Structure probing data (2A3) for a 207-nucleotide construct.
The RNA was probed in 150 mM KOAc, 10 mM MgCl2 and 150 mM bicine (pH 8.5) at 24 C.
The 2A3 profile rests on 630 reads.

RNA sequence: GGGAACGACUCGAGUAGAGUCGAAAAGAUUUAAACAGAUGGAGAUACACAAAUGUUUGAAGCCCAGUAACAAAAAUCCUGGUAUCUCGGGUAUACAGUAGUGCAGAUACUGUAUUUUUAAUGCUCCUUAGGUUUUCCAUCUUCGGAUGGAAAACAACAGUGUUACUUCGUUCGCGAAGUAACACUGAAAAGAAACAACAACAACAAC
Reactivity to 2A3 in 0.01 (KOAc 150mM, MgCl2 10mM, bicine 150mM(pH8.5), 24C), signal-to-noise 1, nucleotides 027 to 156: g010a000u040u020u100a030a000a020c010a010g000a050u050g010g000a020g000a020u020a020c000a000c000a060a070a070u020g030u000u000u050g010a000a000g000c020c020c020a010g090u130a170a100c060a080a240a030a000a050u070c000c000u020g030g000u010a010u020c020u020c000g000g000g000u020a030u010a000c000a000g030u050a010g050u030g220c090a020g060a220u020a030c000u000g000u000a010u000u000u000u020u140a140a120u100g020c060u190c060c100u060u110a100g050g070u070u000u000u050c000c000a030u000c000u060u020c200g010g000a000u000g010g000a000a000a000a000c000a000a000

For 2A3 the reverse transcriptase was SuperScript II with manganese. It was measured as part of the RMDB library M2RFOK.